The record gives the reactivity of an RNA of 177 nucleotides to DMS and 2A3. The RNA was probed in 150 mM KOAc, 10 mM MgCl2 and 150 mM bicine (pH 8.5) at 24 C.
[RMDB]
RNA sequence: GGGAACGACUCGAGUAGAGUCGAAAAGAUAUGGAGUGCUCUAAGUGGAGACGUGCUUCGGAAACGAAGCGACGUCUAUGAAGCUUAGAGGCACUCCUAAGUCAAACGUCUGCCUUCGGGCAGACGAGUGAAUAAGGUCGUUCGCGACCUUAUUCACAAAAGAAACAACAACAACAAC
Reactivity to DMS in 0.01 (KOAc 150mM, MgCl2 10mM, bicine 150mM(pH8.5), 24C), signal-to-noise 2, nucleotides 027 to 126: g000a050u000a300u000g000g000a020g000u000g020c000u000c000u000a000a000g020u000g010g010a020g030a000c000g030u000g000c000u030u000c000g020g000a080a130a240c000g000a000a010g000c000g000a010c010g000u020c000u000a170u030g000a200a300g010c000u000u000a000g010a040g020g000c000a000c000u000c010c010u000a010a140g000u010c010a100a140a260c030g000u000c000u000g000c010c000u010u010c300g020g010g000c000a010g020a000c020g000a050
Reactivity to 2A3 in 0.01 (KOAc 150mM, MgCl2 10mM, bicine 150mM(pH8.5), 24C), signal-to-noise 2, nucleotides 027 to 126: g020a020u060a090u180g000g000a000g020u000g000c000u000c000u010a010a000g030u010g070g100a040g010a000c000g010u030g000c000u000u010c020g000g050a090a090a070c030g000a000a030g040c090g090a020c010g000u000c000u060a300u010g010a010a010g000c000u000u000a000g040a090g020g020c000a000c000u000c010c000u010a010a020g000u000c030a140a040a080c010g020u030c000u000g000c000c000u020u080c300g170g020g000c030a010g030a000c000g000a010